[RMDB]
RNA sequence: GGGAACGACUCGAGUAGAGUCGAAAACGGCCGGGAUGAAUGGGAGCCCUUCGCGCCCGGGCUGAAGGCCUUGGAAGACGCCACCACCAUCCGCCGCCGCCUUCUCCUGGCGUUCGAAAAGGCGGAGCUGGAAACCGAUCCCCAUGCACGCGCGGCACGACAGAAAAAUGUUCGCAUUUUUCUGUCGAAAAGAAACAACAACAACAAC
Reactivity to 2A3 in 0.01 (KOAc 150mM, MgCl2 10mM, bicine 150mM(pH8.5), 24C), signal-to-noise 1, nucleotides 027 to 156: c020g030g000c050c050g060g020g020a080u040g020a150a020u070g030g020g040a010g020c040c020c020u070u020c000g040c020g020c000c010c010g000g040g000c040u090g050a110a030g060g000c000c010u020u110g040g020a070a010g020a010c020g030c020c000a040c000c030a010c050c010a070u010c030c010g040c030c040g000c000c000g000c010c020u080u100c060u070c000c060u020g060g010c050g120u190u140c080g090a040a040a040a020g000g000c000g010g000a000g000c040u090g010g000a120a020a000c050c010g020a070u060c000c030c010c030a060u090g040c040a010c060g040c010g010c000g030g010c020a020

Annotation:
Chemical mapping of a 207-nucleotide RNA with 2A3. For 2A3, 694 sequencing reads were counted. Reactivities are given for positions 27 through 156.